[RMDB]
RNA sequence: GGGAACGACUCGAGUAGAGUCGAAAAAGUGGAAGUCAGUGUCCGAUGAUCAAUAACGAUAGCUUUACUCUGAAAAGAAAGUAUCAAAUCGAUAGUGCGGAGUCAACAAUAAAAAUGGAUAAGAAGAGGAUAAAGUUUCAGAAUAGAGCCAAAAUGGAAUUCUGUCUUUGUUCGCAAAGACAGAAUUAAAAGAAACAACAACAACAAC
Reactivity to DMS in 0.01 (KOAc 150mM, MgCl2 10mM, bicine 150mM(pH8.5), 24C), signal-to-noise 1, nucleotides 027 to 156: a010g010u030g000g000a040a150g020u000c080a060g030u020g040u000c020c040g010a150u010g000a100u000c040a140a120u010a110a160c150g000a170u000a020g020c020u000u000u000a050c030u000c010u000g000a050a070a090a190g010a110a070a120g020u010a040u010c050a090a120a090u010c040g000a210u000a040g040u000g000c000g000g000a130g030u030c040a050a050c060a030a120u000a030a040a100a070a090u000g000g000a090u000a050a140g020a040a100g010a130g010g020a020u000a010a030a160g000u000u000u010c010a000g000a020a030u000a070g010a000g020c010c020a010a030a050a130u000g030g000
Reactivity to 2A3 in 0.01 (KOAc 150mM, MgCl2 10mM, bicine 150mM(pH8.5), 24C), signal-to-noise 2, nucleotides 027 to 156: a000g080u080g010g020a040a030g040u010c030a010g010u050g010u090c040c030g020a060u100g000a030u050c120a140a080u180a100a010c040g010a030u050a060g020c010u000u060u040a120c020u050c070u050g050a000a010a000a060g020a000a130a010g010u050a030u110c030a050a150a110u060c040g010a030u030a060g030u030g080c080g040g060a010g030u050c070a010a020c040a100a000u100a130a090a010a000a000u060g030g050a030u070a060a070g040a010a020g020a030g040g000a020u050a060a050a010g010u010u060u090c020a000g000a050a030u030a020g020a010g060c040c050a010a130a000a030u160g010g030
Source information:
An RNA of 207 nucleotides, treated with DMS and 2A3 and read out base by base. For 2A3 the reverse transcriptase was SuperScript II with manganese. As a SHAPE reagent, 2A3 marks flexible, mostly unpaired nucleotides at the ribose 2'-OH. For DMS the reverse transcriptase was MarathonRT. Values cover nucleotides 27 to 156. The RNA was probed in 150 mM KOAc, 10 mM MgCl2 and 150 mM bicine (pH 8.5) at 24 C.